[RMDB]
RNA sequence: GGGAACGACUCGAGUAGAGUCGAAAAGACAGCACCACCGACGCACUGGCGCGUCGUCGUAGCGAAGACGCGUGAAGCUCGCGCAGUAGCAGCGUCAUUGUGGCCUUGGAGACGUGCGUUGGCGAGCAGUAUUACGCAGCUUCGGCUGCGUAAUACUAAAAGAAACAACAACAACAAC
Reactivity to 2A3 in 0.01 (KOAc 150mM, MgCl2 10mM, bicine 150mM(pH8.5), 24C), signal-to-noise 3, nucleotides 027 to 126: g070a020c050a020g000c020a040c010c000a000c000c060g030a010c010g030c000a000c030u090g050g000c000g000c010g010u010c030g020u050c010g120u180a020g150c020g110a090a010g020a030c000g010c000g000u070g030a040a030g000c030u040c010g000c020g010c020a030g030u190a020g010c060a000g080c000g030u040c030a080u070u230g050u040g040g060c010c010u060u050g040g020a070g000a030c050g010u030g010c010g010u050u000g010g010c010g010a000g090c040
Reactivity to DMS in 0.01 (KOAc 150mM, MgCl2 10mM, bicine 150mM(pH8.5), 24C), signal-to-noise 2, nucleotides 027 to 126: g000a080c080a050g030c030a100c030c060a140c040c060g040a020c010g000c000a070c010u000g000g010c030g000c000g000u000c000g000u000c000g000u070a140g000c150g030a010a020g010a010c010g010c020g010u030g000a130a170g000c000u000c040g010c010g000c020a110g030u040a070g010c040a040g010c020g010u000c040a060u000u000g020u000g000g010c010c050u030u070g000g020a080g050a040c060g040u000g020c000g010u000u000g000g000c100g000a090g010c090
Source: RMDB library OK1LIB, as collected in RNAgym.
This 177-nucleotide RNA was probed chemically with 2A3 and DMS.
For DMS the reverse transcriptase was MarathonRT.
The 2A3 profile rests on 2,139 reads.
The reactions ran in a buffer of 150 mM KOAc, 10 mM MgCl2 and 150 mM bicine (pH 8.5), at 24 C.
For 2A3 the reverse transcriptase was SuperScript II with manganese.